[RMDB]
The record gives the reactivity of an RNA of 177 nucleotides to 2A3 and DMS. For DMS the reverse transcriptase was MarathonRT. The data come from the RNA Mapping Database (RMDB), library OK2TST.
RNA sequence: GGGAACGACUCGAGUAGAGUCGAAAACACUUCGCAGCAGUGCCAUGUGGAUUAUUCCCUCUCUGGAAAAAUAGAAACAAAUAGCGUUCAUAUGCUGCACGGACAGUGUGGAUAAAAAGAGUAACUAACUAUAGCGACUUUUCGAAGUCGCUAUAGUAAAAGAAACAACAACAACAAC
Reactivity to 2A3 in 0.01 (KOAc 150mM, MgCl2 10mM, bicine 150mM(pH8.5), 24C), signal-to-noise 1, nucleotides 027 to 126: c010a020c030u080u080c070g000c030a030g000c050a000g140u010g040c030c010a010u030g030u120g030g000a000u150u060a020u110u050c030c000c000u000c000u000c010u000g030g080a070a180a000a040a020u120a120g050a090a160a000c010a000a110a140u180a090g090c070g010u050u010c030a010u050a000u240g050c010u000g010c010a040c020g070g000a030c030a170g010u000g010u020g040g010a040u180a040a070a040a010a000g090a010g050u090a100a030c030u020a000
Reactivity to DMS in 0.01 (KOAc 150mM, MgCl2 10mM, bicine 150mM(pH8.5), 24C), signal-to-noise 2, nucleotides 027 to 126: c060a060c030u000u000c140g020c020a040g010c060a050g000u010g040c000c070a060u000g030u000g000g010a140u000u000a160u010u010c030c000c030u000c040u030c030u000g010g000a050a080a050a100a070u010a070g000a120a120a060c050a030a060a130u010a120g020c080g000u000u000c050a090u010a050u000g000c030u000g020c010a060c050g020g010a100c110a060g010u000g030u000g000g020a170u000a050a110a050a080a060g000a110g010u010a050a130c120u020a070